[RMDB]
This 177-nucleotide RNA was probed chemically with 2A3 and DMS.
High DMS reactivity at an A or C suggests that its Watson-Crick edge is free.

RNA sequence: GGGAACGACUCGAGUAGAGUCGAAAAUAACACCUAUAUCUACCCACUUUUUAAAUAUAACCAUGGUAAACUAUGGCUAAUAUAGUGGAUGAGUGGGUGACCUAUCAGCUUGACGGUACGGUAAGUGAAUGGUGCAUUUAUUCGUAAAUGCACCAUUAAAAGAAACAACAACAACAAC
Reactivity to 2A3 in 0.01 (KOAc 150mM, MgCl2 10mM, bicine 150mM(pH8.5), 24C), signal-to-noise 8, nucleotides 027 to 126: u100a020a020c010a010c000c010u010a020u010a070u060c010u020a050c000c000c000a020c010u060u050u010u110u200a120a230a060u160a030u020a050a010c000c000a000u010g040g060u130a090a050a090c020u020a010u000g000g000c000u030a080a040u070a060u030a050g030u020g030g000a010u010g000a000g010u010g000g000g000u000g010a000c000c000u060a070u140c040a030g090c040u060u100g090a050c030g030g070u120a030c060g020g040u050a080a030g060u030g140
Reactivity to DMS in 0.01 (KOAc 150mM, MgCl2 10mM, bicine 150mM(pH8.5), 24C), signal-to-noise 7, nucleotides 027 to 126: u040a090a240c040a030c010c000u000a030u020a090u010c010u010a150c080c000c000a010c000u000u010u010u030u030a060a110a100u020a040u010a100a150c000c000a010u000g010g010u060a130a140a150c040u010a010u000g000g000c030u000a030a050u000a030u010a010g010u000g000g000a030u000g000a030g010u000g000g000g000u000g010a090c000c010u010a040u010c080a120g010c070u010u020g000a070c090g010g010u000a040c100g000g020u020a040a080g010u010g010